Source: RMDB library ARCHII, as collected in RNAgym. Chemical mapping of a 207-nucleotide RNA with DMS and 2A3. The RNA was probed in 150 mM KOAc, 10 mM MgCl2 and 150 mM bicine (pH 8.5) at 24 C. For 2A3 the reverse transcriptase was SuperScript II with manganese. For 2A3, 3,745 sequencing reads were counted. DMS (dimethyl sulfate) methylates the pairing face of unpaired adenines and cytosines. DMS adducts were read by reverse transcription with MarathonRT.
RNA sequence: GGGAACGACUCGAGUAGAGUCGAAAAAAGACACUGUACCGAGGUCACUAAGGAAUGGUGAACUGCCCCAGGCUGGAUAACAGAGCAGGGAAAAGCCCUCGCUCUUGGUAGUGGGAGGAUCUCGUGCCAGAAUUCUGACGUGCUAACGCAUCGCUGCGAGUAAAUAUACGUUCGCGUAUAUUUACUCAAAAGAAACAACAACAACAAC
Reactivity to DMS in 0.01 (KOAc 150mM, MgCl2 10mM, bicine 150mM(pH8.5), 24C), signal-to-noise 2, nucleotides 027 to 156: a090a050g000a150c040a080c070u010g030u000a110c020c030g000a090g020g010u000c020a080c060u000a060a140g000g000a120a100u000g000g020u000g020a060a060c030u000g020c030c010c010c040a050g020g040c010u000g000g010a160u000a070a090c100a030g010a050g040c020a050g000g020g000a080a120a120a210g000c050c010c010u000c060g010c010u000c010u000u000g010g000u000a030g030u000g000g000g010a150g000g010a070u000c010u000c050g020u010g030c020c030a050g000a110a140u010u000c040u000g000a060c030g010u010g020c040u000a080a060c040g010c060a050u010c080g030c020u000g010c230
Reactivity to 2A3 in 0.01 (KOAc 150mM, MgCl2 10mM, bicine 150mM(pH8.5), 24C), signal-to-noise 4, nucleotides 027 to 156: a010a010g080a000c050a000c040u050g020u070a060c010c030g020a020g030g020u050c030a010c100u050a040a070g040g000a090a040u080g030g000u040g050a120a050c030u040g020c010c000c000c000a020g050g000c010u050g000g030a070u030a200a020c040a020g000a000g000c010a000g050g010g000a040a150a090a120g170c010c000c000u050c100g000c000u000c000u010u070g030g010u050a060g020u060g010g030g020a050g010g040a030u010c030u020c070g030u060g040c020c010a030g050a040a050u120u050c040u060g040a070c030g020u030g010c050u070a110a040c060g010c030a030u090c070g050c090u080g000c020